[RMDB]
Structure probing data (2A3 and DMS) for a 177-nucleotide construct. Conditions: 150 mM KOAc, 10 mM MgCl2 and 150 mM bicine (pH 8.5), 24 C. DMS adducts were read by reverse transcription with MarathonRT. The data come from the RNA Mapping Database (RMDB), library OK2TST.
RNA sequence: GGGAACGACUCGAGUAGAGUCGAAAAUCCGCUGCCCGACGACAAAUCGCGUGAGGCUAUCCUGAAGGCUAACUUGCGCAAGUCGCCGCUGGCCAAGGAAGUAGACCUUACCUACAUCGCCAAGGUACUGGUCCAGGGUAUUCGUACCCUGGACCAGAAAAGAAACAACAACAACAAC
Reactivity to 2A3 in 0.01 (KOAc 150mM, MgCl2 10mM, bicine 150mM(pH8.5), 24C), signal-to-noise 1, nucleotides 027 to 126: u000c000c000g000c070u050g000c040c020c010g020a030c030g040a000c060a020a290a020u240c070g000c010g020u010g050a030g060g080c050u030a030u010c000c050u120g210a300a130g000g020c010u010a030a010c030u020u000g000c030g000c010a050a040g010u060c000g000c010c000g010c050u090g000g030c000c020a050a010g050g000a050a040g000u080a030g050a120c000c000u010u030a090c030c020u010a020c000a140u040c050g050c140c000a090a010g070g040u050a080
Reactivity to DMS in 0.01 (KOAc 150mM, MgCl2 10mM, bicine 150mM(pH8.5), 24C), signal-to-noise 1, nucleotides 027 to 126: u000c000c000g030c180u000g010c000c050c020g000a050c010g000a090c040a070a080a130u000c130g000c050g010u030g010a010g000g040c140u000a060u020c040c030u010g010a150a230g000g000c100u020a000a060c010u000u000g040c000g040c010a080a160g000u000c010g000c020c190g000c100u020g000g000c000c040a210a070g000g000a090a110g030u020a080g010a140c020c020u000u020a040c040c020u000a140c200a230u040c060g000c080c130a110a070g000g030u010a090